An RNA of 207 nucleotides, treated with 2A3 and read out base by base. The reactions ran in a buffer of 150 mM KOAc, 10 mM MgCl2 and 150 mM bicine (pH 8.5), at 24 C.
RNA sequence: GGGAACGACUCGAGUAGAGUCGAAAAGGGGUCGACAGCAUUGCGUCACCAGGCUCUUGGAUUUAUGUGCUGAAGCCUCCACGGCACAUUGUCAGAGCCUGCAAGUCGCAAUGGUCGACGGAGGCACCCAAAAUCUCUGUCGUUCGCGACAGAGAAAGUUAUACACUGCCUUCGGGCAGUGUAUAACAAAAGAAACAACAACAACAAC
Reactivity to 2A3 in 0.01 (KOAc 150mM, MgCl2 10mM, bicine 150mM(pH8.5), 24C), signal-to-noise 2, nucleotides 027 to 156: g160g020g020g000u040c020g000a010c010a130g110c010a140u000u010g000c000g020u060c030a220c300c030a030g000g000c030u020c040u170u270g210g020a120u230u300u090a010u060g000u000g010c000u050g030a110a020g000c010c000u000c000c000a010c040g020g000c000a000c010a010u000u020g050u050c160a040g000a000g000c020c020u010g010c000a090a170g070u060c000g000c000a000a000u000g010g000u000c000g000a010c000g000g000a000g000g000c000a030c000c000c000a030a080a070a110u010c000u000c000u000g020u010c010g020u030u060c260g020c010g150a010c000a000g000a000g000a010a000a020
Annotation
The 2A3 profile rests on 1,471 reads. It was measured as part of the RMDB library RNAMAK. For 2A3 the reverse transcriptase was SuperScript II with manganese.